Structure probing data (DMS and 2A3) for a 177-nucleotide construct. The 2A3 profile rests on 5,860 reads.
RNA sequence: GGGAACGACUCGAGUAGAGUCGAAAAGUGACACUGUUCGCAGUGUCACAAAGUGGUGGAUCUAGAACCACAAUAACUAGAUCAAAGAUCAAGUCUAGAUCAAAAGCAUACAGUUCGCUGUAUGCAAGGUAAUGCAUUGGUUCGCCAAUGCAUUACCAAAAGAAACAACAACAACAAC
Reactivity to DMS in 0.01 (KOAc 150mM, MgCl2 10mM, bicine 150mM(pH8.5), 24C), signal-to-noise 2, nucleotides 027 to 126: g010u000g020a010c010a000c010u000g000u000u000c240g010c030a030g020u020g000u010c000a010c000a040a040a090g000u000g000g010u000g000g010a000u000c000u010a020g000a070a050c010c000a000c020a050a080u010a080a120c110u000a120g000a020u000c030a100a110a150g010a060u000c040a070a050g010u000c050u000a020g030a050u010c080a120a090a090a100g000c000a000u000a000c000a010g010u000u000c230g040c010u000g000u010a000u000g000c010a040a010
Reactivity to 2A3 in 0.01 (KOAc 150mM, MgCl2 10mM, bicine 150mM(pH8.5), 24C), signal-to-noise 3, nucleotides 027 to 126: g010u010g000a000c000a000c000u020g020u040u080c160g030c090a000g000u020g000u010c000a000c000a010a000a010g030u030g000g030u020g020g020a010u000c000u010a030g010a030a050c000c010a020c070a010a050u190a020a010c070u070a040g010a030u020c070a040a250a050g030a030u050c050a050a040g120u000c010u050a000g000a020u020c020a000a090a030a010g020c000a000u000a000c000a010g000u020u090c170g050c100u010g000u000a000u000g000c000a010a020